This 177-nucleotide RNA was probed chemically with 2A3 and DMS.
For DMS the reverse transcriptase was MarathonRT.
Reactivities are given for positions 27 through 126.
It was measured as part of the RMDB library M2PK50.
[RMDB]
RNA sequence: GGGAACGACUCGAGUAGAGUCGAAAAGUCAGCUUGUUCGCAAGCUGACAAACUGGACUCACCCACACCCAGGCGAAGCCGUGUCAAAAUGGGUGUGGGUAAAAAGGACACUGUUCGCAGUGUCCAAGUCAAAGGAGAUGUUCGCAUCUCCUUUGACAAAAGAAACAACAACAACAAC
Reactivity to 2A3 in 0.01 (KOAc 150mM, MgCl2 10mM, bicine 150mM(pH8.5), 24C), signal-to-noise 3, nucleotides 027 to 126: g010u000c000a000g000c010u020u020g040u100u130c200g030c110a000a000g000c000u000g000a010c000a000a000a000c010u050g090g060a020c020u030c060a010c010c000c000a000c010a010c010c000c010a030g020g030c060g080a110a080g140c110c070g130u130g100u170c090a130a130a090a190u040g000g000g000u020g000u000g000g000g000u000a000a000a000a000a000g000g010a000c000a000c010u030g020u050u070c190g000c120a000g000u010g000u000c000c000a000a000
Reactivity to DMS in 0.01 (KOAc 150mM, MgCl2 10mM, bicine 150mM(pH8.5), 24C), signal-to-noise 2, nucleotides 027 to 126: g000u000c000a000g000c020u000u010g020u010u020c120g020c000a020a020g010c000u000g020a000c010a000a060a090c110u020g040g010a120c090u010c060a080c000c000c000a010c010a010c000c000c020a040g020g020c140g000a040a100g030c110c140g050u000g000u000c090a070a060a200a130u010g010g000g010u010g010u010g000g010g000u010a000a000a020a040a030g010g010a000c000a000c000u000g000u000u010c200g000c010a000g000u000g010u000c000c000a000a010